[RMDB]
RNA sequence: GGGAACGACUCGAGUAGAGUCGAAAAGCUAGUGUGAUUACUAUCAUCUCUCAUGGAUGAAGAAACUAAGAUACAGAGAGAUGCUUCUCCAAACUGAUCAGUGACUCAGUGUCUAAGCUCGAUUCCACUGCGACUAAAUCUUCGGAUUUAGUCGCAGAAAAGAAACAACAACAACAAC
Reactivity to DMS in 0.01 (KOAc 150mM, MgCl2 10mM, bicine 150mM(pH8.5), 24C), signal-to-noise 1, nucleotides 027 to 126: g000c060u000a020g050u000g000u000g000a170u000u010a040c030u020a090u010c000a020u020c050u000c010u000c040a090u030g020g020a070u000g000a140a150g000a200a060a060c170u000a070a020g000a080u000a040c020a040g010a010g000a020g020a070u000g010c180u000u000c020u000c040c060a030a090a170c080u000g000a130u030c010a090g010u000g020a040c190u000c000a020g010u000g090u000c010u010a110a070g000c030u000c000g000a120u000u020c030c030a160
Reactivity to 2A3 in 0.01 (KOAc 150mM, MgCl2 10mM, bicine 150mM(pH8.5), 24C), signal-to-noise 1, nucleotides 027 to 126: g020c020u050a020g010u050g020u020g170a070u000u140a070c060u020a010u140c000a000u020c010u000c000u000c050a170u110g070g010a030u100g050a110a020g080a100a160a010c100u110a100a090g060a150u100a110c050a020g010a000g010a010g000a010u020g000c050u080u030c010u000c000c000a070a040a050c030u020g040a060u010c050a060g070u020g170a030c000u000c050a080g040u030g020u000c030u020a020a030g010c010u020c090g070a050u080u010c020c020a020

This 177-nucleotide RNA was probed chemically with DMS and 2A3. It was measured as part of the RMDB library OK2TST. Reactivities are given for positions 27 through 126. For 2A3, 882 sequencing reads were counted.